[RMDB]
RNA sequence: GGGAACGACUCGAGUAGAGUCGAAAAGAGCGAUUAGACAAAGGGGUAGAGCUACAUAUUAGAUAGCUGUAUAAUCGUUCAAGUUACAUCAAAAGAUCUUCAAUAUUUAUUACUUACUUUCCUUUCUGCCAGAGUACGGUAUUCGUACCGUACUCAAAUCCGUGCGUAUGUUCGCAUACGCACGGAUAAAAGAAACAACAACAACAAC
Reactivity to 2A3 in 0.01 (KOAc 150mM, MgCl2 10mM, bicine 150mM(pH8.5), 24C), signal-to-noise 1, nucleotides 027 to 156: g000a000g000c000g000a000u000u040a010g050a050c070a100a160a050g000g000g000g000u040a010g020a000g070c000u010a070c000a060u300a180u230u020a040g170a230u000a020g000c000u000g000u050a010u020a010a000u010c000g010u020u000c020a020a000g020u020u060a060c050a050u070c040a050a090a160a070g040a070u010c040u150u070c120a000a120u070a280u250u200u240a100u270u130a090c020u100u000a120c060u030u120u020c000c000u010u140u010c010u060g200c130c070a070g000a000g000u000a000c000g020g030u040a050u000u010c090g070u010a000c010c000g000u010a000c000u010c000a000a000